[RMDB]
RNA sequence: GGGAACGACUCGAGUAGAGUCGAAAAGAAAGAAAGAAGAAUCACCAGGAGGCAAGGAUCCUCGACUACGUUAUUCGGGCACCUUGAGUUGAGAGGAGCUAGUGGUGCGCCCGGCCUGGAGAUCAAAACACGACAGGCGGGUUCGCCCGCCUGUCAAGUACAUGUUGGACUUCGGUCCAACAUGUACAAAAGAAACAACAACAACAAC
Reactivity to 2A3 in 0.01 (KOAc 150mM, MgCl2 10mM, bicine 150mM(pH8.5), 24C), signal-to-noise 1, nucleotides 027 to 156: g070a030a080a010g020a020a110a020g100a000a070g030a080a050u010c020a050c030c020a020g020g040a050g020g000c050a020a180g030g010a030u000c030c010u050c010g000a020c020u200a070c100g100u120u040a050u130u100c020g040g060g000c010a000c010c060u050u170g030a010g020u060u060g020a030g010a010g010g010a030g000c000u030a050g020u010g130g020u000g010c020g010c010c000c010g010g000c010c000u000g000g010a060g000a010u060c040a000a150a000a000c080a040c050g010a010c000a000g000g000c050g000g010g030u060u020c110g010c020c000c000g030c000c000u000g000u020c010a000a000
Conditions: 150 mM KOAc, 10 mM MgCl2 and 150 mM bicine (pH 8.5), 24 C. Chemical mapping of a 207-nucleotide RNA with 2A3. Source: RMDB library M2RFPK, as collected in RNAgym.